[RMDB]
RNA sequence: GGGAACGACUCGAGUAGAGUCGAAAAUGACAGGCAGCUGCAUUUGUGCCCGGAAAGCGCGAAGUGUAAUCAAUGAGUAAAGCAAAUCUCAAGCCAUAAAUUGGUAAUUCCUUCUUCUUCAACGGUUUAUAUAUAGGCUCUUCGGAGCCUAUAUAUAAAAAGAAACAACAACAACAAC
Reactivity to DMS in 0.01 (KOAc 150mM, MgCl2 10mM, bicine 150mM(pH8.5), 24C), signal-to-noise 1, nucleotides 027 to 126: u000g010a130c080a070g000g020c200a070g000c010u000g040c040a010u000u010u000g030u030g010c110c030c040g000g000a020a120a120g010c020g030c090g000a040a120g020u010g030u000a100a070u000c060a050a080u020g000a030g040u020a070a120a130g000c210a040a070a070u000c050u000c020a070a200g020c010c000a100u000a040a090a070u000u010g000g030u000a120a060u000u000c050c000u010u010c070u000u010c030u010u010c070a050a110c110g030g030u010u000
This 177-nucleotide RNA was probed chemically with DMS. The reactions ran in a buffer of 150 mM KOAc, 10 mM MgCl2 and 150 mM bicine (pH 8.5), at 24 C.